RNA sequence: GGGAACGACUCGAGUAGAGUCGAAAAGUCGGUAUGGUAAGUGACGCAAGCUGUAUGGUAAGUGACGCAAGCUGAAAGAAGAGCGCUGAACAGCAGAAAAAAUACCGAUAGAAACAAUCUGCGUCCGUGUACGCCAAAUUUUCGAAUUUGGCGUACAAAAAGAAACAACAACAACAAC
Reactivity to 2A3 in 0.01 (KOAc 150mM, MgCl2 10mM, bicine 150mM(pH8.5), 24C), signal-to-noise 4, nucleotides 027 to 126: g020u000c010g000g000u000a000u060g010g150u210a110a070g070u100g050a010c000g010c020a060a050g000c000u010g020u100a220u140g190g030u140a100a070g020u100g060a040c030g000c040a070a120g020c040u120g170a300a050a000g100a020a050g050a050g000c000g000c000u040g010a100a000c000a000g040c010a010g090a050a160a010a000a000a000u000a000c000c000g000a000u010a050g040a000a080a010c060a030a060u060c060u080g000c000g000u000c000c000g030
Reactivity to DMS in 0.01 (KOAc 150mM, MgCl2 10mM, bicine 150mM(pH8.5), 24C), signal-to-noise 4, nucleotides 027 to 126: g010u000c000g010g010u000a010u000g000g010u020a040a070g000u030g020a030c020g010c010a070a160g000c010u010g020u010a080u050g000g010u030a070a070g000u000g000a170c080g000c080a100a100g000c060u030g020a100a160a140g020a130a160g010a140g020c010g010c010u000g010a060a190c020a040g010c020a050g000a010a020a060a080a100a020u000a000c010c000g000a010u010a060g010a120a080a130c140a030a080u020c110u000g010c000g010u000c010c070g060
Notes: Conditions: 150 mM KOAc, 10 mM MgCl2 and 150 mM bicine (pH 8.5), 24 C. An RNA of 177 nucleotides, treated with 2A3 and DMS and read out base by base.